Notes
This 177-nucleotide RNA was probed chemically with DMS and 2A3. For 2A3, 2,318 sequencing reads were counted. For 2A3 the reverse transcriptase was SuperScript II with manganese.
RNA sequence: GGGAACGACUCGAGUAGAGUCGAAAAGAUAUGGAUAUGUUUAGGACAUGCGUGUGGGUCGGAAACGACCUAAACACGCAACAGCCUACGGACAUAUCCUAAGUCAAAAGGCCAGUUCGCUGGCCAAUCGUAUAGUCUCCUUCGGGAGACUAUACGAAAAAGAAACAACAACAACAAC
Reactivity to DMS in 0.01 (KOAc 150mM, MgCl2 10mM, bicine 150mM(pH8.5), 24C), signal-to-noise 2, nucleotides 027 to 126: g010a020u010a300u000g000g010a000u000a000u000g010u000u000u000a050g000g010a000c040a230u000g020c000g080u000g070u000g000g010g010u000c010g030g020a110a100a130c040g010a000c000c000u000a010a060a120c020a000c000g000c000a010a050c290a140g010c000c000u000a040c300g010g000a000c000a010u000a010u000c000c000u000a030a110g000u000c030a040a090a170a210g010g010c040c000a000g010u000u020c280g010c030u000g000g000c000c000a000a000
Reactivity to 2A3 in 0.01 (KOAc 150mM, MgCl2 10mM, bicine 150mM(pH8.5), 24C), signal-to-noise 1, nucleotides 027 to 126: g040a010u030a020u130g000g000a000u010a000u020g010u010u100u080a090g070g020a110c140a260u300g010c000g010u000g000u000g050g010g080u020c000g030g030a050a060a000c010g010a040c000c000u000a050a100a000c010a000c000g000c000a020a020c020a010g100c000c000u060a070c150g040g030a020c020a000u000a000u000c000c000u010a090a020g040u010c010a020a000a070a190g020g000c000c000a000g000u060u070c240g030c090u000g000g000c030c000a000a050
The data come from the RNA Mapping Database (RMDB), library TTRDES.